An RNA of 177 nucleotides, treated with 2A3 and DMS and read out base by base. Reactivities are given for positions 27 through 126. It was measured as part of the RMDB library TTRDES. For DMS the reverse transcriptase was MarathonRT. The RNA was probed in 150 mM KOAc, 10 mM MgCl2 and 150 mM bicine (pH 8.5) at 24 C.
[RMDB]
RNA sequence: GGGAACGACUCGAGUAGAGUCGAAAAGAUAUGGACCGCGAGGCAAGCCCGUGGUCGGAAACGACCAUAGGGUGAUGACCCUCACGGUCCUAAGUCAAACCCGCUUCCCGUUCGCGGGAAGCGGGAAGACAUAUAGCGAGUUCGCUCGCUAUAUGUCAAAAGAAACAACAACAACAAC
Reactivity to 2A3 in 0.01 (KOAc 150mM, MgCl2 10mM, bicine 150mM(pH8.5), 24C), signal-to-noise 2, nucleotides 027 to 126: g000a000u000a000u040g010g000a000c010c000g010c020g000a000g000g040c050a060a070g000c000c000c020g010u000g000g000u000c000g010g000a010a010a000c010g010a000c000c010a020u270a250g010g020g000u020g010a070u030g000a000c020c000c010u000c000a050c000g010g000u000c000c000u000a010a000g010u000c000a020a020a210c010c010c000g000c020u000u020c040c000c020g090u110u140c300g010c040g180g010g000a030a000g000c010g010g000g000a000a030
Reactivity to DMS in 0.01 (KOAc 150mM, MgCl2 10mM, bicine 150mM(pH8.5), 24C), signal-to-noise 2, nucleotides 027 to 126: g000a030u000a010u000g000g000a010c000c000g030c050g000a040g030g010c010a090a030g010c000c000c000g000u000g020g000u000c000g010g000a010a010a010c000g000a020c000c000a010u000a030g060g020g030u010g020a070u020g010a020c300c000c000u000c000a010c000g000g020u000c000c000u000a000a060g010u000c010a080a210a230c000c000c000g000c030u000u000c000c000c000g040u010u000c280g040c030g010g010g010a030a020g000c000g000g010g000a020a030